[RMDB]
RNA sequence: GGGAACGACUCGAGUAGAGUCGAAAAGAAGACGUGACGAAAAGUCACGAAAAGAGCUAGCAGGUACCGCUAGCAAAGAAAAGGUACCAAGACGGAAACGUCAGACAUCGGAGACGAUGUCAAAAGAGGUAAAUAGUCCCUUCGGGGACUAUUUACCAAAAGAAACAACAACAACAAC
Reactivity to 2A3 in 0.01 (KOAc 150mM, MgCl2 10mM, bicine 150mM(pH8.5), 24C), signal-to-noise 1, nucleotides 027 to 126: g190a050a050g160a010c010g010u030g000a000c020g100a050a000a000a180g010u010c010a010c030g030a040a010a000a000g150a000g000c000u000a000g000c110a110g000g010u000a000c020c000g000c000u000a000g000c040a000a000a000g060a020a000a010a010g000g000u000a010c000c000a000a010g000a000c020g030g000a070a050a010c000g000u000c010a000g010a000c000a010u010c000g000g010a090g000a040c020g020a000u010g000u010c010a000a000a000a000g170a040
Reactivity to DMS in 0.01 (KOAc 150mM, MgCl2 10mM, bicine 150mM(pH8.5), 24C), signal-to-noise 1, nucleotides 027 to 126: g000a230a170g010a300c070g010u040g000a020c010g000a070a030a140a260g010u000c030a000c040g040a080a050a070a000g010a200g060c000u000a000g010c000a070g000g000u050a000c000c000g150c000u000a010g050c020a050a060a100g000a010a000a000a140g030g000u020a000c000c000a260a060g000a040c000g000g010a190a170a150c050g010u000c000a140g010a000c000a000u000c000g000g000a250g000a130c050g020a000u000g010u040c000a040a010a030a190g030a120